Notes
The data come from the RNA Mapping Database (RMDB), library TTRDEL. This 177-nucleotide RNA was probed chemically with 2A3 and DMS. High 2A3 reactivity points to a flexible backbone, as in loops and unpaired stretches. Values cover nucleotides 27 to 126. The RNA was probed in 150 mM KOAc, 10 mM MgCl2 and 150 mM bicine (pH 8.5) at 24 C. High DMS reactivity at an A or C suggests that its Watson-Crick edge is free.
RNA sequence: GGGAACGACUCGAGUAGAGUCGAAAAGAUAUGGAUCCGACGACGGCUAGUCUGGGUGUCGGAAACGACACAAGACUUGGACCCAUCAGGAUCCUAAGUCAAACCUAGUAGGUUCGCCUACUAGGAAGCCAAUGCAAUACUUCGGUAUUGCAUUGGCAAAAGAAACAACAACAACAAC
Reactivity to 2A3 in 0.01 (KOAc 150mM, MgCl2 10mM, bicine 150mM(pH8.5), 24C), signal-to-noise 1, nucleotides 027 to 126: g000a000u040a020u170g000g020a000u030c050c030g030a030c120g000a020c100g140g070c070u090a050g010u000c020u050g300g200g000u000g010u030c010g050g000a030a080a020c000g000a010c010a000c010a000a000g010a010c000u050u100g300g000a240c030c010c000a030u100c030a020g000g020a030u000c030c000u000a090a000g000u030c030a070a000a090c000c000u000a000g000u000a010g050g070u060u050c300g110c050c000u000a000c000u010a000g010g000a000a000
Reactivity to DMS in 0.01 (KOAc 150mM, MgCl2 10mM, bicine 150mM(pH8.5), 24C), signal-to-noise 1, nucleotides 027 to 126: g000a020u010a300u010g010g000a010u000c000c010g010a030c090g020a110c190g000g000c050u000a000g000u000c000u000g000g010g040u000g000u010c010g000g030a060a050a100c020g000a020c000a030c010a280a010g010a010c010u000u000g030g000a100c070c000c070a040u000c010a190g020g000a000u000c000c000u000a060a060g000u000c070a070a090a140c000c000u000a030g000u000a000g000g000u000u010c150g000c010c000u010a000c000u010a000g000g020a010a060